RNA sequence: GGGAACGACUCGAGUAGAGUCGAAAAAUUGAGGGAUAAGACAGGCUCUCCCAUCCAACUCCUAUUCCAACACGUCCUCGUCGUACAGAGUGGUAACAUGUGUCACCACAUAUCCAAGCUUGGGUACAAAAGCCAACUACGUUCGCGUAGUUGGCAACACAAUAAACCGGUUCGCCGGUUUAUUGUGAAAAGAAACAACAACAACAAC
Reactivity to DMS in 0.01 (KOAc 150mM, MgCl2 10mM, bicine 150mM(pH8.5), 24C), signal-to-noise 1, nucleotides 027 to 156: a140u010u000g000a100g000g040g030a080u010a030a110g000a080c040a120g010g050c060u000c050u000c010c000c000a150u010c030c030a120a090c040u010c010c020u000a100u010u000c020c030a070a100c100a100c040g010u000c000c010u000c040g080u000c070g050u000a100c070a040g010a130g030u010g010g020u000a100a010c000a150u010g010u000g000u010c040a030c040c020a020c000a080u000a010u000c000c010a060a200g010c110u010u000g010g000g020u020a030c040a040a050a080a150g000c000c040a010a010c010u000a020c000g020u000u010c300g030c030g060u000a010g030u000u000g010g040c010a020a010
Reactivity to 2A3 in 0.01 (KOAc 150mM, MgCl2 10mM, bicine 150mM(pH8.5), 24C), signal-to-noise 2, nucleotides 027 to 156: a000u090u090g030a050g010g000g010a030u060a150a030g030a070c040a040g050g010c020u000c000u020c050c000c030a040u050c000c020a010a050c060u040c040c040u070a050u090u020c040c040a060a000c040a000c090g090u030c000c040u030c020g090u020c020g000u030a070c040a040g000a010g050u030g050g000u110a110a020c010a070u160g040u030g000u090c060a020c030c060a040c010a060u050a020u020c000c020a050a010g020c020u110u140g060g000g010u060a040c050a020a080a000a000g010c020c000a000a000c000u000a000c000g030u030u100c110g000c020g110u000a000g000u000u000g000g000c000a000a000